Source: RMDB library M2RFPK, as collected in RNAgym. An RNA of 207 nucleotides, treated with DMS and 2A3 and read out base by base. Conditions: 150 mM KOAc, 10 mM MgCl2 and 150 mM bicine (pH 8.5), 24 C.

[RMDB]
RNA sequence: GGGAACGACUCGAGUAGAGUCGAAAAGAAAGAAAGUACAGAAAGUAUUGUGGGAAAUAAUGUGUAAAUCAUUGACCGUUCCUGCGCUGGUAAGAAUAAAAUUUUAGUCCAGACACCACCAGUAUAACCAAUCUAGUGACCUUCGGGUCACUAGAAAUCUUUAAUGUCAGUUCGCUGACAUUAAAGAAAAAGAAACAACAACAACAAC
Reactivity to DMS in 0.01 (KOAc 150mM, MgCl2 10mM, bicine 150mM(pH8.5), 24C), signal-to-noise 2, nucleotides 027 to 156: g000a100a100a150g000a180a110a100g010u010a140c050a140g000a120a060a150g000u000a050u010u010g000u000g010g000g000a040a050a070u010a030a050u000g010u000g020u000a100a120a300u000c010a060u000u000g000a150c040c000g010u010u020c030c070u000g000c050g030c020u030g020g010u000a040a080g000a030a070u000a060a060a070a300u000u000u000u000a100g000u000c000c030a110g010a210c060a120c000c040a000c040c000a060g000u000a050u000a080a050c030c080a030a080u000c000u000a030g010u000g010a030c000c000u010u000c300g020g030g030u000c000a000c000u000a000g000a000a040a080
Reactivity to 2A3 in 0.01 (KOAc 150mM, MgCl2 10mM, bicine 150mM(pH8.5), 24C), signal-to-noise 2, nucleotides 027 to 156: g080a020a060a000g020a090a090a000g020u030a020c010a020g160a100a080a000g060u080a060u200u110g000u040g000g000g000a010a030a020u020a010a010u020g010u010g060u050a010a010a030u000c000a010u030u000g040a020c000c010g000u060u100c020c020u030g000c030g020c020u000g000g000u000a020a000g020a050a070u130a060a120a070a100u030u060u060u050a000g000u000c000c010a020g030a060c020a030c040c000a010c010c010a030g050u040a090u060a200a020c050c020a050a080u040c000u000a000g000u000g000a010c000c000u000u050c230g060g000g030u000c000a000c000u000a000g000a000a000a000